[RMDB]
Record summary
An RNA of 207 nucleotides, treated with 2A3 and read out base by base.
RNA sequence: GGGAACGACUCGAGUAGAGUCGAAAAGUUCAUCCCCUGAUCAAGGAUGCCCGAAACGGUGAGGCGGAAAGCAAAUUAAAUAACGUCAACCCAUCGGGACGGGUGGCCAGUUAAGAAGUGAGGAUUCAAAAGAUCGAACCGUUCGCGGUUCGAUCAAGGAUAAGAUUGCCUUCGGGCAAUCUUAUCCAAAAGAAACAACAACAACAAC
Reactivity to 2A3 in 0.01 (KOAc 150mM, MgCl2 10mM, bicine 150mM(pH8.5), 24C), signal-to-noise 2, nucleotides 027 to 156: g050u040u110c010a020u060c060c000c010c020u060g030a110u150c020a040a180g000g010a000u010g010c000c000c000g020a040a020a010c010g050g000u050g000a110g000g070c020g020g070a160a100a010g080c130a210a060a090u130u290a080a170a130u050a040a030c060g010u010c070a010a010c000c000c000a000u030c000g000g000g000a000c010g000g000g020u010g020g000c000c040a060g000u100u140a150a050g040a100a030g050u090g110a080g090g000a020u130u170c090a080a130a000a000g000a000u040c000g000a000a000c010c000g010u030u020c090g050c000g100g000u000u000c000g000a000u000c000a000a000
For 2A3, 633 sequencing reads were counted. Values cover nucleotides 27 to 156.